[RMDB]
Structure probing data (2A3) for a 177-nucleotide construct. The RNA was probed in 150 mM KOAc, 10 mM MgCl2 and 150 mM bicine (pH 8.5) at 24 C.
RNA sequence: GGGAACGACUCGAGUAGAGUCGAAAAAUUGCCAAAGACUUAAACUACUUUGUAGUAAAAGUGAUAAUACGAUAGCUAUAUCGGAAUGGUUUGCCGUAUGACCAAGAUUGAAAUAUCUAAACACGAUGGCGUCAAAUUUAUUCGUAAAUUUGACGCCAAAAGAAACAACAACAACAAC
Reactivity to 2A3 in 0.01 (KOAc 150mM, MgCl2 10mM, bicine 150mM(pH8.5), 24C), signal-to-noise 3, nucleotides 027 to 126: a000u030u100g090c020c000a040a080a020g080a040c000u020u010a130a130a000c010u030a000c040u100u160u300g070u030a030g000u000a040a140a000a040g020u030g030a070u030a120a050u030a090c010g010a000u020a020g160c090u080a020u000a040u210c020g070g060a060a080u090g010g010u000u000u060g050c000c000g010u030a000u300g000a000c000c000a020a000g000a010u020u020g030a070a040a000u070a020u040c000u010a010a010a010c000a000c020g090a090u110